[RMDB]
RNA sequence: GGGAACGACUCGAGUAGAGUCGAAAAGAGGUCUGCCCAAUUUCCCUUAUAUCCUUACCACGGCAGACUUCGAAGGGGUUGAGAAAGGGAAAUUGGUGGUAAGGAUAUGUCUCAACCCUUAUGGAGACUACUGGAUUGUAUUCGUACAAUCCAGUAGAAAAGAAACAACAACAACAAC
Reactivity to DMS in 0.01 (KOAc 150mM, MgCl2 10mM, bicine 150mM(pH8.5), 24C), signal-to-noise 4, nucleotides 027 to 126: g000a110g000g010u000c010u000g020c000c010c150a060a250u000u000u010c000c010c010u010u010a110u000a120u000c010c010u000u000a030c020c010a130c110g020g020c020a020g010a030c010u000u000c040g010a110a060g010g000g010g000u010u000g010a030g000a050a070a070g020g010g000a020a040a060u000u010g010g020u010g020g020u010a020a010g010g010a030u010a090u010g010u000c000u000c000a020a030c000c010c010u000u010a040u000g020g010a190g010a290
Reactivity to 2A3 in 0.01 (KOAc 150mM, MgCl2 10mM, bicine 150mM(pH8.5), 24C), signal-to-noise 2, nucleotides 027 to 126: g070a020g000g030u000c010u010g010c000c030c000a030a040u070u030u020c020c010c040u100u110a300u040a050u180c000c000u010u020a020c000c020a040c050g020g000c010a000g010a010c000u010u010c000g030a090a040g060g000g010g000u020u000g030a050g020a090a100a040g070g010g040a030a050a040u070u040g100g000u060g000g010u010a000a000g010g000a010u030a100u110g040u000c000u000c000a020a000c010c010c010u020u000a110u070g070g030a050g030a050